[RMDB]
RNA sequence: GGGAACGACUCGAGUAGAGUCGAAAAGCCUUAACAUAUAUAAGGAGGGAAUAUCUCACCCGGAAAGGGUAAGACCCUUAUGAAUGGAGCAUGGUCUAGGGUGUGCCACAAAGGCAAAUGUUGGUAGUGUCUGUCAUGUGGUUAGAAAUGCAUUUGGGUCAUUAUAAGAUUUCGAUCUUAUAAUGACAAAAGAAACAACAACAACAAC
Reactivity to DMS in 0.01 (KOAc 150mM, MgCl2 10mM, bicine 150mM(pH8.5), 24C), signal-to-noise 3, nucleotides 027 to 156: g000c010c000u000u000a070a120c050a110u010a140u000a110u010a070a070g020g000a060g000g010g010a070a060u010a160u000c010u000c020a020c020c010c010g030g050a160a120a170g010g010g020u010a020a030g000a160c000c000c020u000u000a060u000g010a150a070u000g000g010a080g030c020a070u010g010g000u000c060u000a100g030g020g020u000g040u000g000c000c030a060c040a060a080a130g030g020c010a030a050a090u000g010u000u010g020g020u000a070g030u000g020u000c020u010g010u000c030a160u000g010u010g020g010u000u000a110g010a060a060a090u000g020c040a150u000u000u000g020g010
Reactivity to 2A3 in 0.01 (KOAc 150mM, MgCl2 10mM, bicine 150mM(pH8.5), 24C), signal-to-noise 4, nucleotides 027 to 156: g000c000c000u090u100a170a020c050a050u190a010u100a010u050a240a030g040g020a040g030g030g010a060a100u060a100u160c030u000c020a010c000c010c020g090g040a250a100a040g020g000g000u010a000a010g060a030c010c000c000u040u070a060u070g120a110a060u040g020g010a030g060c050a030u030g040g010u080c050u080a040g030g010g020u050g010u040g050c000c010a020c030a050a130a020g010g000c000a030a040a040u120g020u110u070g050g040u030a070g050u010g040u070c030u030g030u020c020a060u080g010u020g030g000u010u000a040g040a020a060a020u130g030c030a040u030u040u090g120g000